An RNA of 177 nucleotides, treated with 2A3 and DMS and read out base by base. The DMS profile rests on 5,108 reads.

RNA sequence: GGGAACGACUCGAGUAGAGUCGAAAAGUGGAAAACGUACGUUUUAUAUCACAGCAAAUGGCGGUAUUUCAUUCUGUCGUAGGCAUAAUUGGAAUUGUGUGGAUUGUGACACUGCAGGUGUGGGGAACAAUCAUUGGUACUUCGGUACCAAUGAUUGAAAAGAAACAACAACAACAAC
Reactivity to 2A3 in 0.01 (KOAc 150mM, MgCl2 10mM, bicine 150mM(pH8.5), 24C), signal-to-noise 2, nucleotides 027 to 126: g070u080g030g020a040a020a000a010c030g040u180a040c030g020u090u000u040u020a120u030a010u080c040a030c010a030g030c020a030a030a090u050g040g000c000g030g000u060a110u020u100u030c030a030u050u000c020u030g050u050c050g070u050a060g020g020c020a020u060a070a070u090u070g070g030a060a060u060u030g010u020g010u020g110g020a080u060u040g020u010g010a020c000a010c050u030g000c010a020g000g010u040g020u040g010g020g020g000a000a040
Reactivity to DMS in 0.01 (KOAc 150mM, MgCl2 10mM, bicine 150mM(pH8.5), 24C), signal-to-noise 4, nucleotides 027 to 126: g020u000g010g010a020a030a040a040c040g020u010a070c160g020u010u000u000u010a070u010a190u010c070a050c080a100g010c090a050a050a080u000g010g020c000g020g000u000a050u010u010u000c080a070u010u000c040u000g010u000c070g020u000a060g020g010c030a040u000a060a090u000u010g000g000a050a080u000u000g020u000g020u000g010g010a110u000u000g030u010g000a070c080a050c060u000g010c040a050g020g020u000g010u000g010g010g020g000a080a150

Values cover nucleotides 27 to 126. 2A3 adducts were read by reverse transcription with SuperScript II with manganese.